[RMDB]
The record gives the reactivity of an RNA of 207 nucleotides to 2A3.
For 2A3 the reverse transcriptase was SuperScript II with manganese.
Conditions: 150 mM KOAc, 10 mM MgCl2 and 150 mM bicine (pH 8.5), 24 C.
RNA sequence: GGGAACGACUCGAGUAGAGUCGAAAAGCGUACUACUUGCGUAACAGAUCGAAGAACAUAGGUCUCUAGCGUGUCGCUCCCAAAUAGGAGCGAUCGGGCCUAUGGGAGAUCUGGAGAAGCAAGUAUCGCAAAACAAUUUCCGUUCGCGGAAAUUGAACAUAGGCUCCAACUUCGGUUGGAGCCUAUGAAAAGAAACAACAACAACAAC
Reactivity to 2A3 in 0.01 (KOAc 150mM, MgCl2 10mM, bicine 150mM(pH8.5), 24C), signal-to-noise 1, nucleotides 027 to 156: g010c010g070u140a080c030u010a010c000u020u000g020c000g020u010a020a060c000a000g030a020u020c000g110a300a020g030a140a000c000a010u000a000g000g040u070c070u060c140u300a060g040c060g110u160g090u050c000g000c010u060c010c000c010a180a300a060u300a030g020g010a000g000c000g050a010u040c020g010g000g000c010c010u000a000u000g000g000g000a060g000a010u000c000u020g020g000a000g000a010a010g000c000a010a000g000u000a010u080c000g030c040a000a060a000a020c000a010a000u000u000u050c020c000g020u000u060c290g000c010g030g000a000a000a000u000u010g000a090a010